Structure probing data (2A3 and DMS) for a 177-nucleotide construct. The data come from the RNA Mapping Database (RMDB), library OK2TST. For 2A3 the reverse transcriptase was SuperScript II with manganese. Values cover nucleotides 27 to 126. The DMS profile rests on 16,946 reads.
RNA sequence: GGGAACGACUCGAGUAGAGUCGAAAAAUUGGUCAAAGUAAAGCGAGCCCUAAGUAGUUGGUAUUGCCCUCCUUCUGGUUCCGAUGGCUACAAUCCGUGCAGCUGCGCAGACCGGUUCUAAGCUGCGCUUAUUAUGAGCGUUCGCGCUCAUAAUAAGAAAAGAAACAACAACAACAAC
Reactivity to 2A3 in 0.01 (KOAc 150mM, MgCl2 10mM, bicine 150mM(pH8.5), 24C), signal-to-noise 4, nucleotides 027 to 126: a000u060u060g030g000u040c030a040a080a100g090u080a100a100a030g060c060g050a010g010c020c010c000u050a080a030g020u050a010g010u070u130g050g010u120a230u050u270g030c020c010c010u020c000c000u030u050c030u040g040g000u010u020c020c010g020a050u100g030g000c020u040a040c040a020a060u010c020c020g030u050g000c020a020g010c010u050g000c020g000c030a020g030a080c040c000g010g010u030u020c030u030a040a010g000c010u020g000c000g020
Reactivity to DMS in 0.01 (KOAc 150mM, MgCl2 10mM, bicine 150mM(pH8.5), 24C), signal-to-noise 9, nucleotides 027 to 126: a100u010u000g010g010u000c030a080a090a120g010u010a060a080a110g010c080g010a100g010c030c020c040u000a070a100g010u000a040g010u010u000g010g010u000a090u000u000g000c040c030c020u000c040c030u000u000c050u010g000g010u000u000c050c030g010a100u000g010g000c030u000a060c120a060a080u010c050c040g010u000g010c030a040g010c060u000g020c080g020c070a060g000a100c050c050g010g010u010u010c060u000a110a090g010c010u000g000c020g010